[RMDB]
RNA sequence: GGGAACGACUCGAGUAGAGUCGAAAAACUAGGAGCGCACAUCUCUCUAAGACUGUACGACUGUCUGUCUCUCUAGCACGCUUGUUCAACGAGAGAGAGAGAGCGUUGGAACAAGUGUGCAACGAAAACCUGUACGGUUGUUCGCAACCGUACAGGUAAAAGAAACAACAACAACAAC
Reactivity to 2A3 in 0.01 (KOAc 150mM, MgCl2 10mM, bicine 150mM(pH8.5), 24C), signal-to-noise 2, nucleotides 027 to 126: a010c070u060a050g060g020a050g010c040g020c030a000c030a150u080c050u000c000u000c010u060a060a040g030a030c020u030g090u110a030c040g120a090c040u040g020u060c020u020g040u020c030u000c000u030c030u060a040g000c000a000c000g000c000u000u000g000u000u010c010a010a000c000g000a020g000a000g000a010g020a000g010a010g000a070g030c010g000u000u020g170g010a000a000c000a000a010g010u000g000u000g000c010a000a000c040g020a040a010a000
Reactivity to DMS in 0.01 (KOAc 150mM, MgCl2 10mM, bicine 150mM(pH8.5), 24C), signal-to-noise 1, nucleotides 027 to 126: a080c090u000a100g000g000a090g000c070g000c090a060c090a040u010c020u000c020u000c070u000a120a090g010a040c000u030g010u000a030c030g010a110c040u000g010u010c000u000g010u010c060u000c030u000c010u000a170g060c000a000c000g000c000u000u030g050u010u010c000a000a020c000g010a060g010a100g000a050g010a090g020a060g010a090g000c000g010u000u000g010g000a030a000c000a010a020g010u000g000u000g000c020a050a030c140g000a050a060a060
Chemical mapping of a 177-nucleotide RNA with 2A3 and DMS. Values cover nucleotides 27 to 126. For 2A3 the reverse transcriptase was SuperScript II with manganese. For DMS the reverse transcriptase was MarathonRT. For DMS, 1,039 sequencing reads were counted. The RNA was probed in 150 mM KOAc, 10 mM MgCl2 and 150 mM bicine (pH 8.5) at 24 C.